[RMDB]
RNA sequence: GGGAACGACUCGAGUAGAGUCGAAAAACUUUUGGAAAUAAAUCUCGAUUCCAUGCUGGGGGAAGGCUUUGUACUCACGGAGCGCGGCUACUUCAUCCUGGAUGCAAAAGCUCUGGAGCAGCUCAACCCCUAAUGGGAAAUUCGUUUCCCAUUAGGGAAAAGAAACAACAACAACAAC
Reactivity to 2A3 in 0.01 (KOAc 150mM, MgCl2 10mM, bicine 150mM(pH8.5), 24C), signal-to-noise 2, nucleotides 027 to 126: a000c040u180u110u180u250g060g060a100a150a050u200a050a140a100u150c050u010c060g070a070u070u000c020c000a040u080g030c040u100g030g000g000g020g020a060a050g010g000c010u080u080u110g070u060a030c000u020c050a080c080g030g010a040g010c040g010c030g040g040c010u050a030c030u130u120c020a090u140c000c060u020g080g050a050u120g020c000a050a150a050a040g010c000u000c000u050g050g020a000g040c010a000g010c020u010c050a010a040c000
Reactivity to DMS in 0.01 (KOAc 150mM, MgCl2 10mM, bicine 150mM(pH8.5), 24C), signal-to-noise 3, nucleotides 027 to 126: a120c090u010u010u010u010g010g000a080a040a120u000a050a070a140u000c040u010c040g000a140u000u000c020c010a060u000g000c110u000g030g000g000g000g000a130a090g000g010c050u010u000u000g000u010a120c070u000c030a070c080g020g000a030g010c060g010c130g000g020c050u010a050c040u000u000c070a070u010c070c080u000g010g000a090u010g010c050a030a060a110a230g000c030u010c020u000g010g000a070g000c050a040g020c020u000c060a100a200c140

Overview
Structure probing data (2A3 and DMS) for a 177-nucleotide construct. The DMS profile rests on 1,777 reads. Values are in units of 0.01, from 0 to 300, in steps of 10. The reactions ran in a buffer of 150 mM KOAc, 10 mM MgCl2 and 150 mM bicine (pH 8.5), at 24 C. The data come from the RNA Mapping Database (RMDB), library OK2TRN.